Overview
This 207-nucleotide RNA was probed chemically with 2A3 and DMS. It was measured as part of the RMDB library OK3TST. The RNA was probed in 150 mM KOAc, 10 mM MgCl2 and 150 mM bicine (pH 8.5) at 24 C. The 2A3 profile rests on 6,592 reads.
RNA sequence: GGGAACGACUCGAGUAGAGUCGAAAAGCUCUGUUGCCAGGCUGGAGCGCGGUGGUGAGAUCUCAGCUCACUACAACCUCUGCUUCCCAGGUUCAAACGAUUCUCCUGCCUCAGACUCCUGAUUAGCUGGGAUUACAGGCACAUGCCACCACGCCUGCUAGAUAGUAAGUUUCGACUUACUAUCUAGAAAAGAAACAACAACAACAAC
Reactivity to 2A3 in 0.01 (KOAc 150mM, MgCl2 10mM, bicine 150mM(pH8.5), 24C), signal-to-noise 6, nucleotides 027 to 156: g020c020u010c030u050g090u120u090g050c050c020a020g010g030c020u020g020g020a050g000c080g010c060g030g000u010g010g020u030g020a060g010a060u040c060u030c110a040g010c000u020c020a020c010u060a060c010a050a060c000c020u040c050u060g020c020u090u070c020c000c010a020g040g030u040u060c070a080a060a040c080g030a080u060u000c010u020c030c010u030g020c010c010u030c010a030g010a110c030u020c020c010u080g040a150u060u120a030g010c020u020g000g010g020a020u030u090a040c030a040g030g020c010a010c010a070u170g020c010c020a050c010c000a030c070g020c010c000u020g020
Reactivity to DMS in 0.01 (KOAc 150mM, MgCl2 10mM, bicine 150mM(pH8.5), 24C), signal-to-noise 4, nucleotides 027 to 156: g010c020u000c010u010g020u010u010g010c020c020a100g010g020c030u000g020g020a030g030c060g040c070g020g060u010g000g010u010g010a110g010a070u010c090u000c100a110g020c000u000c040a060c030u000a040c030a070a050c030c030u000c020u000g020c070u000u000c020c020c010a080g010g010u010u010c050a070a110a100c110g020a130u000u000c010u000c020c010u000g030c020c000u010c030a110g000a070c020u010c020c010u000g000a120u000u000a070g020c010u000g000g020g000a110u000u000a090c050a080g020g000c040a060c060a090u000g000c020c010a070c010c010a060c040g010c000c010u020g030